[RMDB]
RNA sequence: GGGAACGACUCGAGUAGAGUCGAAAAUGGUGAUGUCUCCUAACCUUUAUCAAUGGGGGCACUCGGUCGUGCUGUGGGUAGAAAUUUUAUUUCGUGCCUACCUUAGACGCUUGUCGUCGGGAGUAUGUGGGACUGAUGAACUUCGGUUCAUCAGUAAGUCACUAAGACUCUUCGGAGUCUUAGUGACAAAAGAAACAACAACAACAAC
Reactivity to DMS in 0.01 (KOAc 150mM, MgCl2 10mM, bicine 150mM(pH8.5), 24C), signal-to-noise 1, nucleotides 027 to 156: u000g030g000u010g010a110u000g000u000c030u030c030c030u000a110a090c060c050u000u000u000a130u000c210a130a040u040g050g150g010g020g030c010a110c020u000c010g020g020u000c080g020u000g030c040u000g030u010g010g000g010u000a270g000a000a080a060u000u000u000u000a030u000u000u000c030g000u000g030c030c010u000a040c010c120u000u010a120g030a090c000g040c010u000u000g040u000c030g000u000c000g010g000g000a130g000u000a090u000g020u000g000g010g020a140c000u010g040a020u010g000a030a040c010u000u000c300g040g000u000u010c000a000u000c000a000g010u010a010a120
Reactivity to 2A3 in 0.01 (KOAc 150mM, MgCl2 10mM, bicine 150mM(pH8.5), 24C), signal-to-noise 3, nucleotides 027 to 156: u150g000g000u050g010a080u040g020u000c010u040c040c010u070a070a160c020c040u140u290u180a130u100c110a050a080u270g000g010g000g000g000c000a010c010u000c010g010g010u020c050g010u020g060c060u040g050u090g010g010g000u050a020g100a030a070a030u110u290u130u190a120u040u040u170c070g040u140g010c020c000u020a040c010c000u020u080a020g000a000c000g030c060u190u250g130u290c020g000u000c020g020g050g010a100g020u060a100u160g030u120g020g030g000a010c000u000g010a010u010g000a000a000c000u000u050c210g100g000u020u010c000a000u000c000a000g000u000a000a010
An RNA of 207 nucleotides, treated with DMS and 2A3 and read out base by base. For 2A3 the reverse transcriptase was SuperScript II with manganese. For DMS the reverse transcriptase was MarathonRT. For DMS, 1,939 sequencing reads were counted. The reactions ran in a buffer of 150 mM KOAc, 10 mM MgCl2 and 150 mM bicine (pH 8.5), at 24 C.